Conditions: 150 mM KOAc, 10 mM MgCl2 and 150 mM bicine (pH 8.5), 24 C. The record gives the reactivity of an RNA of 177 nucleotides to DMS and 2A3. 2A3 adducts were read by reverse transcription with SuperScript II with manganese.
[RMDB]
RNA sequence: GGGAACGACUCGAGUAGAGUCGAAAAGGAGUUCGAGGCAUACGUCGACCAGUGGAGCAAGGACUUCAAGCGGAAGGUCAAGGUCAACGCGACCCCCGGCCAUCCGAUCGCAUUCGACAUGCGCGGCACUCUUGCGCAAAUUCGUUUGCGCAAGAGUAAAAGAAACAACAACAACAAC
Reactivity to DMS in 0.01 (KOAc 150mM, MgCl2 10mM, bicine 150mM(pH8.5), 24C), signal-to-noise 3, nucleotides 027 to 126: g000g010a030g020u000u010c050g010a080g010g000c050a030u000a110c170g000u000c030g010a110c160c100a140g010u000g020g030a080g010c060a060a150g000g000a120c060u000u000c030a090a130g000c030g000g010a030a040g020g000u000c030a270a050g000g000u000c010a060a140c220g000c290g000a060c040c010c090c080c090g010g010c000c020a070u000c000c000g000a100u000c080g000c050a070u000u000c080g020a050c110a110u000g010c010g020c170g000g010c200
Reactivity to 2A3 in 0.01 (KOAc 150mM, MgCl2 10mM, bicine 150mM(pH8.5), 24C), signal-to-noise 2, nucleotides 027 to 126: g020g030a040g030u110u050c030g030a060g040g040c040a040u080a130c060g020u020c020g040a070c030c050a080g060u040g050g020a060g000c090a150a150g140g000a120c000u030u020c020a010a010g070c020g050g000a010a010g040g000u010c020a000a030g000g020u010c040a130a160c190g000c060g090a030c000c030c000c000c050g000g050c010c000a010u000c000c000g030a050u100c050g000c070a080u030u070c020g020a010c000a060u030g000c040g040c000g050g000c020